[RMDB]
RNA sequence: GGGAACGACUCGAGUAGAGUCGAAAACACAGUGACCAUUCAAGCUGAUUGUGACACUGUGUAGGGUAGGUACUGAUUGGUUCUUCAAUCAGUAGAUGGGAAGAAAAUGCCAUAGGACUGGUAUUGUAUCAGAGGAUAUGUUCGCAUAUCCUCUGAUAAAAGAAACAACAACAACAAC
Reactivity to DMS in 0.01 (KOAc 150mM, MgCl2 10mM, bicine 150mM(pH8.5), 24C), signal-to-noise 5, nucleotides 027 to 126: c010a000c010a010g020u000g010a120c020c000a020u000u000c000a160a160g020c300u000g010a010u000u000g020u020g060a120c010a010c000u000g010u000g010u000a070g010g000g010u000a050g010g010u000a010c010u000g000a010u000u000g010g010u000u000c150u010u010c010a000a000u000c000a010g010u000a010g000a140u010g000g000g000a100a110g010a090a060a040a030u000g000c010c010a040u000a140g000g000a140c200u000g010g000u000a040u000u000g000u000
Reactivity to 2A3 in 0.01 (KOAc 150mM, MgCl2 10mM, bicine 150mM(pH8.5), 24C), signal-to-noise 4, nucleotides 027 to 126: c000a000c000a000g010u010g040a100c010c010a010u040u010c070a140a160g190c160u110g100a040u010u050g070u150g070a030c000a000c000u000g000u000g010u020a010g030g020g010u100a140g080g060u030a010c000u000g000a000u000u010g030g050u100u120c030u090u130c010a010a010u000c000a000g010u000a000g000a110u060g000g000g000a050a050g030a060a190a020a010u030g000c000c000a050u100a130g080g100a080c120u020g010g000u010a030u050u120g070u020
Record summary
Structure probing data (DMS and 2A3) for a 177-nucleotide construct. DMS adducts were read by reverse transcription with MarathonRT. For 2A3 the reverse transcriptase was SuperScript II with manganese. It was measured as part of the RMDB library RFMREP.